[RMDB]
RNA sequence: GGGAACGACUCGAGUAGAGUCGAAAAGAUAUGGAUCCAUCGUGUGGUCGAAGAACUACCGUCGGAAACGACGGUAGGGAGACCAACACGAGUGGAUCCUAAGUCAAACGCAAACUUCGGUUUGCGAGUACCAACGUUACUUCGGUAACGUUGGUACAAAAGAAACAACAACAACAAC
Reactivity to 2A3 in 0.01 (KOAc 150mM, MgCl2 10mM, bicine 150mM(pH8.5), 24C), signal-to-noise 2, nucleotides 027 to 126: g020a010u080a070u180g010g010a000u000c000c000a000u020c010g020u010g020u020g010g000u030c060g200a300a040g030a040a020c000u010a000c000c000g000u000c040g060g000a110a050a080c020g000a000c000g000g020u010a000g000g030g000a020g000a000c000c000a040a030c000a000c000g030a020g040u060g000g010a000u000c000c010u000a040a010g000u000c060a080a040a070c000g030c020a020a000a000c000u090u090c300g150g000u030u000u010g000c000g010a020
Reactivity to DMS in 0.01 (KOAc 150mM, MgCl2 10mM, bicine 150mM(pH8.5), 24C), signal-to-noise 3, nucleotides 027 to 126: g000a070u010a300u000g010g010a000u000c000c000a060u000c000g020u000g080u000g010g000u000c000g010a170a120g000a100a140c000u000a000c000c000g030u000c010g010g000a110a100a190c000g020a010c000g010g000u000a000g000g000g000a130g000a020c000c000a030a040c010a010c000g030a020g060u000g010g000a000u000c000c000u020a020a150g000u000c060a140a100a280c040g020c010a010a000a010c060u020u020c300g000g000u000u000u000g010c000g000a100